[RMDB]
RNA sequence: GGGAACGACUCGAGUAGAGUCGAAAAUUGUGGUCAAGACCUUGGCGUAGUAUCCAAGGUUGUCAAGGUUCCUAUUGACUUAACAAUGAUUGAGUUUAUGUUAUGCUGUAAGGAUGGACAGGGGAAAUUACGGCGCACUAUUCGUAGUGCGCCGUAAAAAAGAAACAACAACAACAAC
Reactivity to DMS in 0.01 (KOAc 150mM, MgCl2 10mM, bicine 150mM(pH8.5), 24C), signal-to-noise 1, nucleotides 027 to 126: u000u030g030u000g000g010u000c060a100a080g000a030c000c000u000u000g010g000c210g000u000a190g000u020a110u000c010c030a000a050g020g000u000u010g030u000c060a110a060g000g000u010u000c040c000u000a130u000u000g000a030c010u010u000a150a020c050a030a100u000g010a160u000u000g000a050g000u000u000u000a070u000g040u010u010a070u000g000c010u000g000u000a030a000g020g020a050u000g010g000a060c050a080g010g000g010g000a070a040a090
This 177-nucleotide RNA was probed chemically with DMS. Values cover nucleotides 27 to 126. The data come from the RNA Mapping Database (RMDB), library M2PK90.